[RMDB]
RNA sequence: GGGAACGACUCGAGUAGAGUCGAAAAUAUAGGCACGUACAAGCGGGGGAAGAACUUCCGGGUAGCACCCAAGAUAGUGGAGAUAAUUUGGGUUUCCGCUAGCUGCCCCAGAGUGCGUGUCUAUACAAGCGCGUCAGUUAUUCGUGGUUGGCGUGCUAAAAGAAACAACAACAACAAC
Reactivity to 2A3 in 0.01 (KOAc 150mM, MgCl2 10mM, bicine 150mM(pH8.5), 24C), signal-to-noise 5, nucleotides 027 to 126: u090a000u000a000g000g000c010a000c010g000u010a000c020a050a090g040c060g000g010g010g000g000a020a010g010a040a040c020u000u000c010c010g000g000g000u010a020g040c060a130c020c020c010a010a000g070a090u170a050g180u120g220g100a070g080a160u190a220a240u230u070u120g170g010g000u030u030u020c010c000g000c030u020a010g010c000u070g020c000c000c010c020a200g190a020g260u000g000c000g000u000g000u000c000u000a000u000a000c000a010
Reactivity to DMS in 0.01 (KOAc 150mM, MgCl2 10mM, bicine 150mM(pH8.5), 24C), signal-to-noise 2, nucleotides 027 to 126: u000a000u010a000g000g000c000a000c000g020u020a030c070a120a170g020c120g000g000g000g020g020a020a030g030a100a080c160u000u000c090c020g020g030g020u020a160g040c200a300c010c010c000a020a010g000a160u000a000g030u020g000g010a040g010a020u000a010a110u030u010u070g000g000g040u000u010u000c030c000g010c000u000a040g000c030u010g000c000c000c000c000a300g000a300g000u000g000c000g000u000g010u000c000u000a000u000a000c160a070